[RMDB]
RNA sequence: GGGAACGACUCGAGUAGAGUCGAAAAUGAAUUGCGUAGUGUAUUGCAGCAGUUUGACUCGUUUGGUAAGCGGUGGGAAGCAAUAUUGCUCCAAGUAUUAGAGGGUAUAAAACCCAAUGAGAGCCAGCUAGCCAAUAUAUUUCGAUAUAUUGGCUAGAAAAGAAACAACAACAACAAC
Reactivity to 2A3 in 0.01 (KOAc 150mM, MgCl2 10mM, bicine 150mM(pH8.5), 24C), signal-to-noise 5, nucleotides 027 to 126: u130g020a010a060u060u060g010c040g030u070a050g040u130g080u180a110u120u190g030c030a020g020c000a010g040u020u070u070g030a040c020u020c050g090u050u080u090g040g000u060a100a010g010c020g030g030u030g050g030g030a070a010g010c010a000a090u120a060u190u120g000c000u000c010c020a040a030g020u010a020u050u070a040g060a110g090g010g000u050a090u090a170a130a060a040c000c000c020a000a020u090g040a060g000a010g090c000c010a020g040
Reactivity to DMS in 0.01 (KOAc 150mM, MgCl2 10mM, bicine 150mM(pH8.5), 24C), signal-to-noise 9, nucleotides 027 to 126: u010g000a070a070u010u010g010c040g030u010a080g020u010g010u000a060u010u010g020c040a130g010c030a040g000u000u000u000g010a090c050u010c060g020u000u000u000g010g000u010a070a110g010c040g000g010u010g010g010g010a090a080g010c070a050a090u000a080u000u000g010c020u000c010c040a050a090g010u000a090u010u000a070g010a200g010g000g010u000a090u010a080a060a100a090c020c010c000a040a120u000g000a080g010a100g010c030c160a100g000
An RNA of 177 nucleotides, treated with 2A3 and DMS and read out base by base. DMS adducts were read by reverse transcription with MarathonRT. Reactivities are rounded to 0.1 and cut off at 0 and 3.